[RMDB]
Source: RMDB library OK3TST, as collected in RNAgym. An RNA of 207 nucleotides, treated with DMS and 2A3 and read out base by base. Values cover nucleotides 27 to 156.
RNA sequence: GGGAACGACUCGAGUAGAGUCGAAAAAUUCAUGUACUAACAACUCCUGGACUUAAUCAUGCAUUUUCUAGUCUAUUGAGUGGAAAGUUCAAAAAGUCAGACGGUAGUUAUCGAACACAUCCUCACUAUUCAUGGAUGCAGAAUAUUUCUAUUCCUACCGAUAUAGAGAUUUCGAUCUCUAUAUCGGAAAAGAAACAACAACAACAAC
Reactivity to DMS in 0.01 (KOAc 150mM, MgCl2 10mM, bicine 150mM(pH8.5), 24C), signal-to-noise 3, nucleotides 027 to 156: a110u000u000c020a100u010g020u000a100c060u010a050a110c050a110a120c020u010c030c020u020g020g030a060c020u000u010a050a090u000c090a110u000g010c080a050u000u000u010u000c020u010a090g020u000c040u010a120u010u000g010a080g020u010g010g000a060a140a030g010u000u000c040a030a110a080a070a070g020u010c030a100g020a060c090g020g020u000a040g020u000u000a050u000c060g000a090a140c100a040c010a020u000c010c000u000c050a110c080u000a140u000u000c030a090u010g020g010a030u000g030c000a080g000a120a100u000a070u000u000u000c000u000a210u000u000c020c000u000a240
Reactivity to 2A3 in 0.01 (KOAc 150mM, MgCl2 10mM, bicine 150mM(pH8.5), 24C), signal-to-noise 9, nucleotides 027 to 156: a000u080u060c050a040u090g050u070a070c030u060a130a090c030a050a030c020u010c020c020u040g050g030a020c010u060u100a090a070u170c080a090u090g020c010a020u040u020u010u010c040u030a040g090u010c020u070a150u140u300g030a020g020u020g010g020a050a030a010g010u020u050c040a100a060a020a010a000g030u030c020a030g040a130c040g030g040u050a020g010u050u040a070u140c080g040a080a020c030a010c000a060u000c000c010u070c020a090c090u160a160u250u170c070a060u130g020g000a000u010g000c020a020g060a120a020u080a100u070u130u040c060u040a080u040u030c000c000u010a060
The RNA was probed in 150 mM KOAc, 10 mM MgCl2 and 150 mM bicine (pH 8.5) at 24 C. The DMS profile rests on 6,922 reads.